[RMDB]
An RNA of 177 nucleotides, treated with DMS and 2A3 and read out base by base. For DMS the reverse transcriptase was MarathonRT. Reactivities are given for positions 27 through 126. The reactions ran in a buffer of 150 mM KOAc, 10 mM MgCl2 and 150 mM bicine (pH 8.5), at 24 C.
RNA sequence: GGGAACGACUCGAGUAGAGUCGAAAACACUCACGAUUCGUCGUGAGUGAAAGAUCGCCAAAGUGACGCAAUCUUCCGCGUCAGGAAGGCGAAACGAGGUAAAAACCGGGUCCUUCGGGACCCGGAACCUGUGAUACUUGUUCGCAAGUAUCACAGGAAAAGAAACAACAACAACAAC
Reactivity to DMS in 0.01 (KOAc 150mM, MgCl2 10mM, bicine 150mM(pH8.5), 24C), signal-to-noise 3, nucleotides 027 to 126: c030a010c010u020c000a000c000g000a010u000u000c180g000u000c010g000u000g010a010g020u000g030a050a060a100g000a100u010c020g030c010c020a010a110a300g010u000g010a030c010g000c040a070a090u020c110u030u000c200c180g020c040g010u010c040a020g010g000a250a160g000g010c010g000a000a050a050c080g000a070g000g000u010a070a050a080a140a080c000c000g000g010g000u000c010c000u000u000c160g010g000g000a000c010c000c010g000g010a000a020
Reactivity to 2A3 in 0.01 (KOAc 150mM, MgCl2 10mM, bicine 150mM(pH8.5), 24C), signal-to-noise 2, nucleotides 027 to 126: c000a000c010u010c010a000c000g010a000u070u070c170g070u010c000g000u100g000a000g010u000g000a000a000a000g020a060u010c010g000c000c000a050a050a040g160u010g010a000c010g010c000a020a120u070c140u210u070c130c080g000c000g020u010c000a000g010g010a030a060g010g010c020g010a020a010a000c010g050a070g060g090u100a080a080a030a030a000c010c000g000g020g010u010c020c000u020u090c160g050g000g000a000c000c020c000g010g000a000a010